[RMDB]
RNA sequence: GGGAACGACUCGAGUAGAGUCGAAAAUCGUCGAGCUUCGGCUCGACGAAAAACGCUAACUGUAAACCGAAGGGUGGAGCGAACGGCGCCUAACGACCGCUCAAAGAGACCCCUUCGGGGGUCUCAACCAUCUACAUAAGUUCGCUUAUGUAGAUGGAAAAGAAACAACAACAACAAC
Reactivity to 2A3 in 0.01 (KOAc 150mM, MgCl2 10mM, bicine 150mM(pH8.5), 24C), signal-to-noise 2, nucleotides 027 to 126: u030c000g000u000c010g010a000g000c030u070u160c290g030g000c000u000c000g000a000c000g000a000a000a000a000a000c010g020c080u030a050a050c040u080g070u190a100a090a090c040c000g030a070a020g080g030g010u100g010g050a030g010c010g010a050a030c040g030g000c020g030c020c000u050a070a010c030g040a040c030c000g020c000u030c040a050a100a020g020a000g010a010c020c010c000c000u040u020c020g020g000g010g020g000u000c000u010c000a000a010
Reactivity to DMS in 0.01 (KOAc 150mM, MgCl2 10mM, bicine 150mM(pH8.5), 24C), signal-to-noise 3, nucleotides 027 to 126: u010c010g020u000c000g000a010g020c010u000u020c200g030g020c010u000c000g000a000c000g010a000a040a030a120a100c090g010c100u010a090a120c090u000g020u000a060a120a070c040c010g000a090a070g000g010g020u000g000g010a070g020c050g000a050a060c080g000g010c030g020c030c040u000a070a090c070g010a080c080c020g000c060u000c070a080a080a170g000a030g000a020c000c000c000c000u000u000c190g030g020g020g010g010u000c000u000c000a040a140
About this RNA
Chemical mapping of a 177-nucleotide RNA with 2A3 and DMS. It was measured as part of the RMDB library M2PK50. The DMS profile rests on 3,486 reads. Reactivities are rounded to 0.1 and cut off at 0 and 3.